[RMDB]
RNA sequence: GGGAACGACUCGAGUAGAGUCGAAAACUUCAGGCCACAUCCUGCCCCUGCUUGCCCUGCUCCUCGGGAGGACUCCCCAUCUCCCCUCUGCUCAUUCACCCCCUGGCUCAUCCAGGUCUGCCCUGCCACAUGCCUUCCCUCUGCAGCUGGUGAUGGAAGUCAUUUUAUAGUUCGCUAUAAAAUGACUAAAAGAAACAACAACAACAAC
Reactivity to 2A3 in 0.01 (KOAc 150mM, MgCl2 10mM, bicine 150mM(pH8.5), 24C), signal-to-noise 1, nucleotides 027 to 156: c040u110u100c030a000g040g000c020c020a040c030a160u190c040c050u040g030c020c010c010c010u030g020c010u040u090g020c000c000c000u020g040c020u010c020c000u030c030g020g000g000a040g010g050a080c070u120c000c000c000c000a060u000c010u000c000c000c000c000u070c010u030g000c000u010c030a060u200u140c020a100c000c000c000c000c020u000g010g000c010u010c090a090u060c050c010a000g010g040u000c000u020g030c000c000c020u030g010c040c000a080c020a060u100g010c010c000u010u080c010c010c000u020c010u010g010c000a060g020c030u020g000g000u050g010a000u030g020g010a000
Reactivity to DMS in 0.01 (KOAc 150mM, MgCl2 10mM, bicine 150mM(pH8.5), 24C), signal-to-noise 1, nucleotides 027 to 156: c050u030u000c020a090g020g030c030c080a070c050a070u010c030c020u000g020c060c000c010c040u010g000c070u010u000g010c030c020c000u000g030c030u000c040c010u000c060g000g070g010a090g030g000a070c050u000c010c020c010c020a140u000c010u000c020c000c010c020u000c020u000g000c040u000c040a210u000u000c070a160c000c000c040c010c000u000g010g000c040u020c080a040u020c020c010a080g010g030u000c040u010g000c000c010c010u000g030c010c030a040c060a100u000g010c020c040u010u000c030c010c000u000c040u000g010c000a090g020c010u010g050g040u010g000a120u000g000g000a170